[RMDB]
RNA sequence: GGGAACGACUCGAGUAGAGUCGAAAAACCUUUGUGCCUUUGUCAGCUAUAAUAAUGAGGAGGGAAUCCCAUUGGGAUUCCUCCCCACCCUCUAUAUAGCUUGGAUUUAAGGCACUCUGGUAAAAGUUGAAGUAUGACUUCGGUCAUACUUCAACAAGAGUUUACAAACGUUCGCGUUUGUAAACUCAAAAGAAACAACAACAACAAC
Reactivity to 2A3 in 0.01 (KOAc 150mM, MgCl2 10mM, bicine 150mM(pH8.5), 24C), signal-to-noise 3, nucleotides 027 to 156: a000c010c000u010u010u020g000u000g000c000c000u000u010u020g020u010c000a000g000c000u010a030u020a140a270u170a140a180u280g010a010g030g000a000g040g000g000a010a000u000c000c010c150a260u220u300g050g000g000a000u020u020c010c000u010c020c000c010c000a090c010c020c000u020c010u030a030u000a000u000a090g000c020u030u080g050g000a040u270u250u190a000a010g000g000c020a000c000u010c000u000g000g020u060a100a100a080a060g000u000u000g000a000a000g010u000a000u000g010a000c000u020u110c300g020g000u000c000a000u000a000c010u000u000c000a000a000c000a000a010